Chemical mapping of a 177-nucleotide RNA with 2A3 and DMS. The data come from the RNA Mapping Database (RMDB), libraries RFM100 and RFMREP.

RNA sequence: GGGAACGACUCGAGUAGAGUCGAAAAGUGGCGAAAGCGCCUCAGGAAGACGGAUCCGACGGUGAGGGACGAAAGCUCGGGUCACGAACCGGAUUAGAUACCCGGGUAGUCCGAGCUGUAAACGAUGGCUAGUAAGUGUCUUCGGACACUUACUAGCAAAAGAAACAACAACAACAAC
Reactivity to 2A3 in 0.01 (KOAc 150mM, MgCl2 10mM, bicine 150mM(pH8.5), 24C), signal-to-noise 2, nucleotides 027 to 126: g080u060g020g000c060g090a090a170a030g130c050g020c000c000u040c040a030g030g020a010a070g070a080c110g000g030a070u010c000c030g000a000c030g050g030u020g000a060g010g030g010a040c080g090a130a040a000g000c000u000c000g000g000g030u100c070a020c030g010a050a000c000c010g030g000a010u040u080a040g060a120u120a110c010c010c010g000g040g000u030a000g010u000c000c000g000a000g000c010u010g000u060a000a020a040c070g060a030u130g070
Reactivity to DMS in 0.01 (KOAc 150mM, MgCl2 10mM, bicine 150mM(pH8.5), 24C), signal-to-noise 4, nucleotides 027 to 126: g030u000g000g030c040g030a070a150a170g040c040g010c010c020u000c030a100g000g020a070a080g030a110c070g000g010a100u000c050c040g030a080c100g000g000u000g000a080g000g000g020a050c120g000a090a140a010g000c000u020c000g000g000g020u030c180a020c030g010a160a300c000c020g000g000a050u040u020a150g000a130u040a100c160c000c000g010g000g010u010a190g010u010c000c000g000a010g000c000u000g010u000a030a030a050c090g000a120u050g000